[RMDB]
RNA sequence: GGGAACGACUCGAGUAGAGUCGAAAAUUCUAAGCGCAUCACAUGAAUUGACUCAUUCAAUCAAUAGUUACAGAAGAAUAGACUGAAAUUCCGAGAGGUUAAGUAACCAGUACUAAAUACUGUUUCAUAAAGGGUUUAGAUGGAGGCUUAAUAGAAACACUACUCAUCAGUUCGCUGAUGAGUAGUGAAAAGAAACAACAACAACAAC
Reactivity to 2A3 in 0.01 (KOAc 150mM, MgCl2 10mM, bicine 150mM(pH8.5), 24C), signal-to-noise 4, nucleotides 027 to 156: u040u030c010u060a060a020g060c010g010c050a040u040c020a050c010a080u110g120a170a070u150u090g030a080c030u030c110a080u220u040c020a030a100u020c020a070a110u090a090g030u040u080a060c030a050g100a120a000g030a100a120u030a040g020a020c030u030g020a060a080a100u130u040c040c010g030a010g010a020g100g040u080u040a030a020g010u010a040a040c040c000a010g040u050a130c040u140a090a060a060u050a040c030u010g030u020u050u040c040a060u080a100a090a070g040g000g000u020u080u090a040g020a030u030g010g000a020g010g010c000u050u030a060a000u100a190g050a010a010a000
Reactivity to DMS in 0.01 (KOAc 150mM, MgCl2 10mM, bicine 150mM(pH8.5), 24C), signal-to-noise 3, nucleotides 027 to 156: u020u000c050u000a100a130g010c050g040c070a090u010c030a070c100a150u000g010a080a080u000u010g010a080c070u000c110a180u000u000c050a040a080u000c040a060a100u000a080g000u010u000a260c090a130g010a120a110g010a040a080u020a130g020a120c040u000g010a060a080a140u000u000c020c030g010a160g010a070g000g030u000u010a020a080g010u000a060a070c110c000a040g050u000a070c020u000a030a040a300u000a060c020u000g000u000u000u000c060a120u000a060a060a080g020g010g000u000u000u000a020g010a040u010g020g000a130g020g020c040u010u000a050a050u020a080g020a150a100a150